Source: RMDB library OK2TST, as collected in RNAgym. The record gives the reactivity of an RNA of 177 nucleotides to DMS and 2A3. The RNA was probed in 150 mM KOAc, 10 mM MgCl2 and 150 mM bicine (pH 8.5) at 24 C.
RNA sequence: GGGAACGACUCGAGUAGAGUCGAAAAUGCUGUGGGGGCUGACCCGAUCUCCAGGGAGGUGCAGGCACAGUCUGCCGCUACCGCAGCUCUGCACCACAGUUGCGGUGCCAGGGGCCAUGGGCCUGGCCUUUGAAACAAUCUUCGGAUUGUUUCAAAGAAAAGAAACAACAACAACAAC
Reactivity to DMS in 0.01 (KOAc 150mM, MgCl2 10mM, bicine 150mM(pH8.5), 24C), signal-to-noise 9, nucleotides 027 to 126: u010g010c040u010g020u000g010g010g010g010g020c030u010g010a260c020c000c010g000a060u000c030u000c030c050a150g010g010g010a130g010g020u000g010c020a020g010g010c040a080c110a090g000u000c050u000g010c040c080g010c040u010a040c020c020g000c000a020g010c010u000c070u010g010c070a080c050c040a080c150a070g010u000u000g010c040g010g000u000g020c080c060a040g000g010g000g010c040c100a100u010g010g010g020c030c020u000g000g010c040
Reactivity to 2A3 in 0.01 (KOAc 150mM, MgCl2 10mM, bicine 150mM(pH8.5), 24C), signal-to-noise 4, nucleotides 027 to 126: u090g000c030u040g010u040g040g030g010g000g000c020u020g030a060c010c000c020g010a090u030c020u010c060c020a030g070g060g030a060g010g030u100g080c030a030g000g040c050a030c030a160g040u020c030u050g080c010c030g030c070u070a040c000c020g000c000a010g010c010u010c000u060g070c030a070c060c010a020c020a060g050u080u080g020c020g020g020u020g000c000c020a030g020g000g000g010c050c010a120u100g050g050g020c010c010u000g020g000c000
Reactivities are given for positions 27 through 126.
2A3 adducts were read by reverse transcription with SuperScript II with manganese.